[RMDB]
RNA sequence: GGGAACGACUCGAGUAGAGUCGAAAACUUUUGUUGCGUAUACUACUUUUGCUAUCUUACAAUCAAUAAUUUUGUUAACACAGGGUGGUGUUGAACCAAAAUGACUACAUGGCUCUAACGUAAUAUACCACUGCAUUCUAUUCGUAGAAUGCAGUGGAAAAGAAACAACAACAACAAC
Reactivity to 2A3 in 0.01 (KOAc 150mM, MgCl2 10mM, bicine 150mM(pH8.5), 24C), signal-to-noise 1, nucleotides 027 to 126: c000u150u050u130u220g070u110u100g150c060g000u020a020u020a180c030u000a020c020u070u000u080u100g060c000u040a050u140c020u130u100a070c070a120a070u030c020a060a180u050a270a090u130u110u000u020g060u000u060a040a040c040a000c010a060g060g160g050u020g090g000u000g060u070u000g000a010a000c030c010a080a000a030a080u070g080a010c030u030a030c090a080u040g010g030c000u040c000u000a010a010c000g020u040a130a090u040a070u040a070
Reactivity to DMS in 0.01 (KOAc 150mM, MgCl2 10mM, bicine 150mM(pH8.5), 24C), signal-to-noise 1, nucleotides 027 to 126: c040u000u030u000u000g010u000u000g030c050g020u000a130u000a030c060u010a080c030u030u000u000u000g030c080u000a100u000c030u000u020a080c160a010a110u000c200a140a100u000a050a150u000u000u000u020g000u000u000a030a030c060a040c050a080g000g000g060u010g000g000u010g010u000u010g040a090a080c150c030a010a050a030a040u010g040a030c070u010a060c130a110u010g010g040c010u000c040u010a040a100c180g010u000a060a090u000a130u000a140